The data come from the RNA Mapping Database (RMDB), library OK2TRN.
Structure probing data (2A3 and DMS) for a 177-nucleotide construct.
DMS adducts were read by reverse transcription with MarathonRT.
The RNA was probed in 150 mM KOAc, 10 mM MgCl2 and 150 mM bicine (pH 8.5) at 24 C.
The DMS profile rests on 4,561 reads.

RNA sequence: GGGAACGACUCGAGUAGAGUCGAAAAGCUAUACGGCUAUAAUGCAUGCUAAUAUCGUAAUGCCGAUAUCGAUUAAUAUGCCGCGUAAUAUAUGCAUGCGCAUCGAUUAAUCGAUCGCGGCGCAUGCGGUGAUACAACGUUUCGACGUUGUAUCACCAAAAGAAACAACAACAACAAC
Reactivity to 2A3 in 0.01 (KOAc 150mM, MgCl2 10mM, bicine 150mM(pH8.5), 24C), signal-to-noise 7, nucleotides 027 to 126: g000c000u040a020u050a300c100g000g000c020u050a040u090a160a080u170g050c030a020u040g000c030u120a150a050u060a140u190c050g120u130a250a110u240g070c040c000g010a010u030a010u010c010g000a010u000u040a040a050u070a040u150g030c050c010g000c020g050u020a150a070u120a070u050a050u300g060c060a020u040g010c010g010c040a010u030c060g140a010u000u050a100a080u110c090g000a010u000c030g000c000g030g000c000g000c000a000u000g000c010
Reactivity to DMS in 0.01 (KOAc 150mM, MgCl2 10mM, bicine 150mM(pH8.5), 24C), signal-to-noise 4, nucleotides 027 to 126: g010c070u010a070u000a190c100g000g010c020u000a100u010a080a080u010g020c060a070u000g010c110u000a070a060u000a060u000c100g010u010a090a120u000g020c090c020g010a030u010a010u000c040g010a040u000u000a030a060u000a030u000g010c030c040g020c020g010u000a050a120u030a130u010a080u010g010c070a030u000g020c040g020c010a020u000c100g010a020u000u000a080a090u000c110g010a020u000c040g010c030g000g000c000g000c010a000u000g000c020